The record gives the reactivity of an RNA of 177 nucleotides to DMS and 2A3. For 2A3 the reverse transcriptase was SuperScript II with manganese. Source: RMDB library OK1LIB, as collected in RNAgym. 2A3 is a SHAPE reagent: it acylates the 2'-hydroxyl of flexible nucleotides of all four kinds.

RNA sequence: GGGAACGACUCGAGUAGAGUCGAAAAGGCUCAGGAAACUGAGCCAAGAAUGAUUGGCGAAUAUAACUUGUGGCCAAUCAGAACAGAAUAAGAGACCACAAGGAAAUAGGAGCAGGAAACUGCUCCAGGAGGUACUACGGUUCGCCGUAGUAUCUCCAAAAGAAACAACAACAACAAC
Reactivity to DMS in 0.01 (KOAc 150mM, MgCl2 10mM, bicine 150mM(pH8.5), 24C), signal-to-noise 6, nucleotides 027 to 126: g000g020c000u010c000a020g000g010a110a150a150c010u000g010a000g010c000c010a020a030g010a110a070u010g000a030u000u000g010g010c120g010a110a100u030a070u020a070a130c020u000u000g010u000g010g000c020c000a020a060u000c020a020g000a210a120c150a100g010a090a070u020a070a100g000a110g010a110c030c020a020c030a020a020g000g000a070a110a110u060a110g010g000a010g000c000a020g000g000a110a070a170c000u000g010c000u010c000c000a010
Reactivity to 2A3 in 0.01 (KOAc 150mM, MgCl2 10mM, bicine 150mM(pH8.5), 24C), signal-to-noise 9, nucleotides 027 to 126: g000g000c000u000c000a000g030g020a060a080a090c010u000g000a000g000c000c000a000a010g020a010a070u050g000a020u010u010g020g000c040g130a180a020u150a030u030a220a100c030u030u030g010u030g050g000c010c000a000a000u010c000a000g000a050a050c060a020g110a080a040u270a210a050g100a010g060a120c020c010a010c010a020a010g060g090a070a090a070u210a150g000g000a000g000c000a000g030g000a060a050a020c000u000g000c000u000c000c000a000

Record summary: The reactions ran in a buffer of 150 mM KOAc, 10 mM MgCl2 and 150 mM bicine (pH 8.5), at 24 C. Values cover nucleotides 27 to 126.